[RMDB]
RNA sequence: GGGAACGACUCGAGUAGAGUCGAAAAGUAUGCUGGUGUGCACCUGUAAUCCCAGCUACUUGGGAGCCUGAGGUGUGAGAAUCACUUGAACCCAGAAGGCGAAGAAUGCAGUGAGCCAAGAUUGUGCCACUGCACUCCAGCCUGGAUGACAGAGCGAGACCAUUAAAUCAUUCGUGAUUUAAUGGUCAAAAGAAACAACAACAACAAC
Reactivity to DMS in 0.01 (KOAc 150mM, MgCl2 10mM, bicine 150mM(pH8.5), 24C), signal-to-noise 5, nucleotides 027 to 156: g020u000a020u000g030c010u010g000g020u010g000u000g020c050a050c030c020u010g010u000a160a260u000c040c000c000a060g010c070u000a030c140u000u010g000g010g020a070g020c070c090u000g010a060g010g030u010g030u010g010a150g000a230a190u000c020a040c030u010u000g010a100a080c010c010c010a140g010a160a050g010g010c030g010a150a160g010a030a040u000g010c000a030g010u010g000a190g030c000c020a080a220g010a290u000u010g010u010g010c010c000a040c010u000g000c010a000c010u000c010c010a300g020c000c000u000g000g000a090u000g000a100c020a120g000a090g010c020g000a180
Reactivity to 2A3 in 0.01 (KOAc 150mM, MgCl2 10mM, bicine 150mM(pH8.5), 24C), signal-to-noise 6, nucleotides 027 to 156: g080u070a030u220g030c000u040g030g020u070g050u070g060c040a040c070c070u080g080u140a050a040u060c000c010c010a010g040c040u100a090c030u030u010g000g000g020a030g050c020c090u070g060a030g010g010u020g010u010g020a030g050a060a060u090c030a010c030u020u040g040a050a030c010c000c000a020g040a080a000g010g000c040g000a040a010g000a010a010u020g000c000a000g010u010g030a050g050c010c040a090a060g170a300u240u220g050u240g030c000c000a010c010u000g000c000a000c010u000c010c000a000g020c010c000u020g010g060a070u130g020a010c070a060g080a020g080c060g030a050
An RNA of 207 nucleotides, treated with DMS and 2A3 and read out base by base. Reactivities are given for positions 27 through 156. DMS adducts were read by reverse transcription with MarathonRT. High 2A3 reactivity points to a flexible backbone, as in loops and unpaired stretches. The reactions ran in a buffer of 150 mM KOAc, 10 mM MgCl2 and 150 mM bicine (pH 8.5), at 24 C. DMS (dimethyl sulfate) methylates the pairing face of unpaired adenines and cytosines. For 2A3 the reverse transcriptase was SuperScript II with manganese.